[RMDB]
RNA sequence: GGGAACGACUCGAGUAGAGUCGAAAAGUUUAGAUCACGAACCUAUCCACAUUGUACGUGGAGAAGGUGCUUAUCUCUAUACAGAAUCGGGCACUGCUUAUCUGGACGCCAUUUCUUCAUGGUGGUGGGCUAGUUCGUAUUUCGAUACGAACUAGCCAAAAGAAACAACAACAACAAC
Reactivity to 2A3 in 0.01 (KOAc 150mM, MgCl2 10mM, bicine 150mM(pH8.5), 24C), signal-to-noise 2, nucleotides 027 to 126: g030u030u060u040a000g000a060u090c080a000c150g040a020a010c020c000u010a040u000c010c010a010c020a030u060u300g230u240a090c110g020u010g020g010a030g000a070a010g020g000u010g030c020u040u080a110u020c030u000c030u040a030u020a160c040a050g080a080a030u090c040g020g020g010c010a030c120u060g020c000u110u080a060u130c020u030g000g030a020c020g000c030c000a040u050u090u070c060u100u090c050a020u120g010g010u020g000g040u040g030
Reactivity to DMS in 0.01 (KOAc 150mM, MgCl2 10mM, bicine 150mM(pH8.5), 24C), signal-to-noise 2, nucleotides 027 to 126: g000u000u000u010a060g000a050u000c110a080c170g020a060a070c010c010u020a240u000c000c000a020c010a160u010u000g020u000a110c230g020u000g000g030a000g000a100a050g000g000u010g030c050u000u000a110u030c080u000c060u000a110u000a040c110a090g010a060a110u010c080g030g020g010c000a070c040u010g000c060u000u000a070u020c040u000g010g000a110c060g000c020c000a040u000u000u000c090u000u000c120a060u000g010g010u000g020g010u000g010